The record gives the reactivity of an RNA of 177 nucleotides to 2A3 and DMS. Values cover nucleotides 27 to 126. For 2A3 the reverse transcriptase was SuperScript II with manganese. The DMS profile rests on 1,438 reads. Source: RMDB library OK2TST, as collected in RNAgym.
[RMDB]
RNA sequence: GGGAACGACUCGAGUAGAGUCGAAAAGGUUCAAUACUAUUGAAUAGUUUUCUAUGGGCUUUUCUUGGAGCACCAGCAUUGUAUACAUUAAGGUUAUAUCUGCGUCAGAAACGAGGUAAGUUAUGAACUAACUUUGGAUGUUCGCAUCCAAAGUUAGAAAAGAAACAACAACAACAAC
Reactivity to 2A3 in 0.01 (KOAc 150mM, MgCl2 10mM, bicine 150mM(pH8.5), 24C), signal-to-noise 1, nucleotides 027 to 126: g090g030u030u000c000a040a000u060a300c070u110a040u130u050g030a020a050u030a110g000u000u120u060u000c030u040a140u040g090g060g000c000u010u120u050u120c020u120u200g040g000a080g040c090a100c080c000a000g080c030a000u030u150g040u070a040u040a060c050a100u090u170a100a030g090g000u080u010a050u000a010u000c020u020g040c040g050u050c080a040g130a100a060a010c020g010a030g010g060u080a000a080g130u050u090a080u080g050a030a090
Reactivity to DMS in 0.01 (KOAc 150mM, MgCl2 10mM, bicine 150mM(pH8.5), 24C), signal-to-noise 2, nucleotides 027 to 126: g000g000u000u010c010a010a130u000a090c150u000a110u000u020g010a060a140u000a070g010u010u000u010u010c070u010a160u000g010g010g010c040u000u000u000u000c070u020u010g020g000a080g020c040a030c080c040a110g010c110a040u020u000g000u010a050u000a050c060a060u000u010a110a060g010g010u000u000a030u000a020u000c210u000g000c040g000u020c070a040g000a030a060a080c090g000a080g020g020u010a030a060g000u010u000a060u000g010a070a190
Conditions: 150 mM KOAc, 10 mM MgCl2 and 150 mM bicine (pH 8.5), 24 C.